RNA sequence: GGGAACGACUCGAGUAGAGUCGAAAAGGAAGGAGACAGGGUCCUGCUGAUCAUUAUAUAAAGUAGUAUUCAGAUUGAUGCAUAGGUCUCGUCUGUUUUGGUUAGGAUGACUGCAUCAUGGACAUCAUGAUAGGCUAGGAUUCGUCCUAGCCUAUCAAAAAGAAACAACAACAACAAC
Reactivity to 2A3 in 0.01 (KOAc 150mM, MgCl2 10mM, bicine 150mM(pH8.5), 24C), signal-to-noise 2, nucleotides 027 to 126: g020g010a000a040g050g030a020g020a020c080a040g000g100g040u000c020c010u020g000c010u020g030a070u060c080a020u090u110a050u040a020u060a120a150a030g050u060a010g010u020a100u080u060c000a020g040a110u080u140g030a040u060g000c040a060u060a170g040g030u040c030u000c090g030u040c030u020g130u100u130u190u180g100g010u070u090a040g000g040a030u050g000a040c030u000g000c020a000u000c000a020u050g000g050a040c010a070u250c010a030
Reactivity to DMS in 0.01 (KOAc 150mM, MgCl2 10mM, bicine 150mM(pH8.5), 24C), signal-to-noise 5, nucleotides 027 to 126: g000g000a070a050g020g020a070g010a080c090a090g000g000g010u000c010c030u010g010c020u000g000a040u000c080a030u000u010a060u000a130u010a070a110a140g020u000a030g010u010a120u000u000c040a040g010a150u000u010g010a010u000g010c030a110u000a150g020g010u010c040u000c060g000u000c030u000g010u010u000u010u000g010g020u010u000a110g000g000a020u000g000a080c100u000g000c010a010u000c030a040u010g010g010a070c110a090u010c130a120